Structure probing data (DMS and 2A3) for a 177-nucleotide construct. For 2A3, 23,503 sequencing reads were counted. Values are in units of 0.01, from 0 to 300, in steps of 10. Reactivities are given for positions 27 through 126. DMS adducts were read by reverse transcription with MarathonRT.

[RMDB]
RNA sequence: GGGAACGACUCGAGUAGAGUCGAAAAUGACGUGGCGCCACAUGGCGCUGCUGAGUCAGGACCAGCUGUACGAGCUGGCCAACAAGCUGUGUGUGCGCCUGGGCAACCUGCAGAAAGUGCUACCCUGUAGCACUCCUUAGUUCGCUAAGGAGUGCUAAAAAGAAACAACAACAACAAC
Reactivity to DMS in 0.01 (KOAc 150mM, MgCl2 10mM, bicine 150mM(pH8.5), 24C), signal-to-noise 9, nucleotides 027 to 126: u010g010a090c090g020u000g010g010c010g020c000c000a050c060a030u000g010g010c010g020c050u000g010c030u010g010a130g010u010c050a060g010g010a060c000c000a010g010c010u000g020u020a130c300g010a040g010c000u000g000g010c010c010a080a110c260a090a150g000c010u010g010u000g010u000g010u010g020c010g010c020c010u000g000g000g010c020a050a090c060c030u000g000c060a070g000a080a090a100g010u000g010c030u000a150c030c020c020u000g010
Reactivity to 2A3 in 0.01 (KOAc 150mM, MgCl2 10mM, bicine 150mM(pH8.5), 24C), signal-to-noise 8, nucleotides 027 to 126: u090g030a020c080g060u070g010g000c010g010c010c000a040c020a060u070g020g000c050g000c040u000g000c010u090g060a060g090u170c080a060g000g070a220c010c000a000g000c000u070g060u280a130c100g080a060g000c000u000g010g000c010c000a040a060c040a040a020g010c010u020g010u010g000u020g080u130g060c000g000c000c000u010g000g030g000c020a040a060c000c010u030g000c020a030g120a110a190a010g120u050g040c010u030a070c020c000c000u070g080